[RMDB]
RNA sequence: GGGAACGACUCGAGUAGAGUCGAAAAGCCUCCUCAUCCAUCUUCAUCAACAUCAUCCCUCCCCUCGAUACGGUGACUGAAGAGGGCGCUGCCGUGGAGCUGUUCGAGGACCUCAUCUCGCACGUGCGAGUAUGAUGAUAUUCGUAUCAUCAUACUCAAAAGAAACAACAACAACAAC
Reactivity to DMS in 0.01 (KOAc 150mM, MgCl2 10mM, bicine 150mM(pH8.5), 24C), signal-to-noise 9, nucleotides 027 to 126: g010c040c020u000c030c010u000c030a080u000c030c040a060u000c040u000u000c030a060u000c060a080a070c090a050u000c050a100u000c020c010c010u000c030c020c010c010u000c050g000a110u010a070c120g010g010u000g010a100c080u000g010a080a090g000a080g000g010g010c110g010c050u000g010c030c030g010u000g010g010a160g010c060u000g010u000u000c040g010a090g010g000a110c050c030u000c070a060u000c020u000c030g010c050a060c120g020u010g010c090
Reactivity to 2A3 in 0.01 (KOAc 150mM, MgCl2 10mM, bicine 150mM(pH8.5), 24C), signal-to-noise 9, nucleotides 027 to 126: g010c000c000u010c010c000u020c010a050u010c030c000a040u010c000u040u040c010a080u040c020a040a080c010a080u100c000a090u080c010c000c000u030c010c010c000c000u000c010g020a030u040a090c040g010g040u040g060a050c030u040g020a060a020g030a060g050g040g000c040g000c040u060g010c010c010g050u070g020g010a050g000c040u050g040u070u050c030g010a040g030g030a050c010c000u040c010a070u030c020u010c020g020c020a030c060g070u100g050c010